[RMDB]
RNA sequence: GGGAACGACUCGAGUAGAGUCGAAAAAAAAGAAGAAACAAGACCGGGAAAACGUAGAUUCGAAAGAUAACAAUAUCACAAACUUCUCACUUCAUCGAUCUUUUUCCGCUUCCGGAAAAAUGGAAAAGAACAAUAGCUUUAAAGAGGUAUCUACCUACUACUAUUACGUCUUCGGACGUAAUAGUAGAAAAGAAACAACAACAACAAC
Reactivity to 2A3 in 0.01 (KOAc 150mM, MgCl2 10mM, bicine 150mM(pH8.5), 24C), signal-to-noise 3, nucleotides 027 to 156: a000a000a010a050g090a030a020g040a040a050a040c100a070a030g050a050c050c060g020g020g030a010a020a050a070c040g020u030a030g010a100u110u060c050g050a100a050a040g010a050u140a130a020c070a170a060u140a050u270c040a020c090a190a190a030c050u090u020c010u000c020a030c040u110u080c060a060u030c030g090a060u020c020u030u060u010u050u020c010c000g040c180u100u050c070c000g010g050a080a030a000a030a020u090g020g000a060a030a060a020g040a020a010c040a050a130u100a070g050c020u060u140u250a020a040a020g040a010g040g030u020a040u030c040u040a060c030c010u040a050
Reactivity to DMS in 0.01 (KOAc 150mM, MgCl2 10mM, bicine 150mM(pH8.5), 24C), signal-to-noise 1, nucleotides 027 to 156: a110a130a160a150g020a060a060g030a100a070a070c120a090a080g000a070c010c010g020g030g010a090a060a070a080c060g020u030a030g000a070u010u000c020g020a090a090a070g000a130u000a050a100c170a080a070u010a070u000c070a040c020a020a040a060c030u000u000c030u010c060a030c050u010u010c050a100u020c040g000a060u000c010u000u000u000u000u000c030c010g000c100u010u000c110c000g060g010a000a000a030a080a010u000g020g040a000a010a100a150g010a050a030c020a030a070u010a120g020c020u000u000u000a020a030a080g010a070g010g010u000a040u000c080u000a110c020c000u000a100
Annotation
Chemical mapping of a 207-nucleotide RNA with 2A3 and DMS. As a SHAPE reagent, 2A3 marks flexible, mostly unpaired nucleotides at the ribose 2'-OH. Reactivities are given for positions 27 through 156. The RNA was probed in 150 mM KOAc, 10 mM MgCl2 and 150 mM bicine (pH 8.5) at 24 C. The DMS profile rests on 1,508 reads. For DMS the reverse transcriptase was MarathonRT.